[RMDB]
RNA sequence: GGGAACGACUCGAGUAGAGUCGAAAAAAUGAGACAUGCAUGGUCCAUGUGGCAGAGGCACCAAUAGGAGAGAAACUUAUGUAUGUAGCCUCUUAAACAGACUUGGAGAGGGGCAGGCCCCAGGGGGACAUGCAUAUGGCUUCGGCCAUAUGCAUGUAAAAGAAACAACAACAACAAC
Reactivity to DMS in 0.01 (KOAc 150mM, MgCl2 10mM, bicine 150mM(pH8.5), 24C), signal-to-noise 3, nucleotides 027 to 126: a070a110u000g010a100g000a050c080a040u010g040c030a050u010g000g010u020c030c040a090u000g030u000g050g020c150a060g000a050g020g010c010a080c130c080a080a040u000a030g000g010a050g010a190g010a090a090a070c010u000u000a020u000g010u010a080u010g000u000a160g000c020c010u000c010u000u000a080a080a090c050a100g000a080c130u000u000g010g010a120g010a090g020g000g000g020c020a060g000g000c040c030c000c030a140g000g000g000g000g010
Reactivity to 2A3 in 0.01 (KOAc 150mM, MgCl2 10mM, bicine 150mM(pH8.5), 24C), signal-to-noise 1, nucleotides 027 to 126: a000a020u260g000a040g010a010c070a040u050g040c000a010u070g030g040u020c020c000a080u050g040u010g020g070c050a000g010a010g040g000c000a010c000c000a070a020u050a040g040g030a070g020a020g050a150a170a010c000u080u060a030u110g060u030a050u060g020u000a060g020c000c000u000c000u020u020a020a020a010c010a040g140a060c040u090u130g000g070a080g010a040g030g040g000g010c030a030g000g050c020c000c000c010a000g020g000g020g000g030